[RMDB]
RNA sequence: GGGAACGACUCGAGUAGAGUCGAAAACUGUGGGCUGAAUGAGGGCAGGAAGAACAGGGUCAAUGGGAAAGGACAGCCCAGAAAAGAGAAUUCACCACCACCUGUGGUCUCCCACUGCUUUGGUAGGAACCUUGUAAACACAGCAGCAGCCCCCAGAGUCACUAUUUUACUUCGGUAAAAUAGUGACAAAAGAAACAACAACAACAAC
Reactivity to DMS in 0.01 (KOAc 150mM, MgCl2 10mM, bicine 150mM(pH8.5), 24C), signal-to-noise 2, nucleotides 027 to 156: c060u010g040u000g000g060g020c010u000g040a130a110u020g010a100g040g020g020c050a110g000g010a110a170g000a060a050c080a100g020g060g010u030c100a090a150u020g000g020g010a090a030a160g050g010a080c050a170g020c010c000c040a270g010a060a100a090a100g020a170g000a030a090u000u010c060a130c000c020a060c000c050a060c100c050u040g000u000g000g000u020c030u010c010c010c030a170c030u000g000c030u000u000u000g030g050u060a170g020g000a050a050c010c020u000u000g080u010a090a060a140c030a100c030a020g000c020a020g000c020a060g000c040c000c000c000c010a060g000a250
Reactivity to 2A3 in 0.01 (KOAc 150mM, MgCl2 10mM, bicine 150mM(pH8.5), 24C), signal-to-noise 3, nucleotides 027 to 156: c010u000g000u030g000g000g010c020u020g030a070a080u140g040a240g030g080g000c090a040g050g010a050a050g030a030a030c030a030g010g020g000u040c020a030a060u050g000g010g060a040a130a120g050g010a040c020a060g000c000c030c010a010g100a000a100a010a000g100a010g050a060a120u160u110c050a040c050c010a020c010c000a060c010c030u050g030u030g050g010u020c040u000c010c010c000a010c020u020g010c000u080u080u110g060g000u050a130g020g080a040a040c000c010u020u020g030u050a010a090a020c030a000c010a040g020c000a000g000c000a000g000c000c010c000c020c000a000g010a020